Structure probing data (DMS and 2A3) for a 177-nucleotide construct. 2A3 adducts were read by reverse transcription with SuperScript II with manganese. The DMS profile rests on 1,147 reads. Conditions: 150 mM KOAc, 10 mM MgCl2 and 150 mM bicine (pH 8.5), 24 C.

RNA sequence: GGGAACGACUCGAGUAGAGUCGAAAACAAGGAGGGUAGUGUGAUCAAUUUCUGUUACAUGCAUCAAAUGGAACUUGCUAAUGGUACACAUACCGGUUCAGCAUUUGAUGGUACUAUGUAUGGUGCCGCAUCCUUACACGUUCGCGUGUAAGGAUGCAAAAGAAACAACAACAACAAC
Reactivity to DMS in 0.01 (KOAc 150mM, MgCl2 10mM, bicine 150mM(pH8.5), 24C), signal-to-noise 1, nucleotides 027 to 126: c090a140a090g000g040a120g000g000g000u000a010g000u010g020u000g000a020u000c110a050a080u010u000u000c080u000g000u020u000a020c060a070u000g000c060a000u000c070a010a000a040u000g010g020a020a060c050u010u000g020c170u010a050a030u000g010g020u010a070c210a120c090a040u000a030c150c060g000g000u000u000c010a100g000c040a090u000u000u020g000a020u000g020g030u000a030c070u000a070u000g000u000a100u020g010g000u000g010c080c090
Reactivity to 2A3 in 0.01 (KOAc 150mM, MgCl2 10mM, bicine 150mM(pH8.5), 24C), signal-to-noise 2, nucleotides 027 to 126: c050a010a050g070g020a040g010g040g030u030a070g140u060g010u010g070a060u040c040a040a010u010u080u040c020u040g040u010u050a010c010a010u050g020c010a010u020c050a030a030a010u020g010g030a050a020c010u030u120g010c030u110a070a030u040g020g020u100a070c120a000c010a090u050a030c000c010g010g030u020u010c020a080g030c020a050u040u050u100g010a060u070g000g000u050a050c020u060a010u130g110u000a060u120g050g000u010g070c030c030